[RMDB]
RNA sequence: GGGAACGACUCGAGUAGAGUCGAAAAGAUAUGGAUGGACUUAUGGACGGAGAGCUUUUGACGCGAUUCGUGUCGGAAACGACAUCCUUUCGCGAUAAGCUCCCGUCCAUAAGUCCAUCCUAAGUCAGACAUUGAUAAAGUUCGCUUUAUCAAUGUCAAAAGAAACAACAACAACAAC
Reactivity to DMS in 0.01 (KOAc 150mM, MgCl2 10mM, bicine 150mM(pH8.5), 24C), signal-to-noise 5, nucleotides 027 to 126: g010a060u000a300u000g000g010a020u000g000g010a020c010u000u000a000u000g010g000a020c010g010g000a220g010a010g010c000u000u000u000u010g010a220c070g010c000g020a010u000u000c110g010u000g000u000c000g010g000a100a100a240c010g020a020c000a020u010c050c090u000u000u000c000g030c010g000a110u010a020a020g010c000u000c000c000c010g010u000c000c000a000u000a000a000g000u000c000c000a000u000c000c010u000a020a080g010u010c070a140